[RMDB]
Structure probing data (DMS and 2A3) for a 177-nucleotide construct. Reactivities are given for positions 27 through 126. For 2A3, 900 sequencing reads were counted. For 2A3 the reverse transcriptase was SuperScript II with manganese.
RNA sequence: GGGAACGACUCGAGUAGAGUCGAAAAAGACAUACGUUCGCGUAUGUCUGACGGGCACCUGACCCUAAGGAAAUGCUCUAUGACAGGACACACUGAAUGUGAUACCUCGAGAUUUCGAUCUCGAGAAACGUCCAUAGGUCUUCGGACCUAUGGACGUAAAAGAAACAACAACAACAAC
Reactivity to DMS in 0.01 (KOAc 150mM, MgCl2 10mM, bicine 150mM(pH8.5), 24C), signal-to-noise 1, nucleotides 027 to 126: a010g000a020c000a010u000a000c000g000u010u020c220g010c030g000u000a010u000g020u000c000u000g000a060c190g000g000g000c060a050c000c010u000g000a270c010c000c010u010a030a090g000g000a040a120a110u010g020c020u020c050u010a120u000g010a110c050a050g000g010a090c030a020c030a100c060u010g010a020a250u000g010u010g000a120u000a090c160c000u000c010g010a000g020a030u000u010u010c180g010a000u000c010u000c010g020a020g020a010a070
Reactivity to 2A3 in 0.01 (KOAc 150mM, MgCl2 10mM, bicine 150mM(pH8.5), 24C), signal-to-noise 1, nucleotides 027 to 126: a010g000a010c010a000u000a000c030g010u010u070c230g000c000g080u000a000u000g020u000c000u020g000a010c010g000g000g020c020a000c000c000u020g110a160c030c000c010u050a070a030g070g000a110a060a020u040g050c020u000c040u010a100u140g180a070c100a060g050g000a060c000a000c000a010c070u090g170a210a050u100g080u060g100a080u140a190c010c010u000c010g000a000g000a000u070u090u070c230g040a010u000c020u000c020g000a000g060a000a040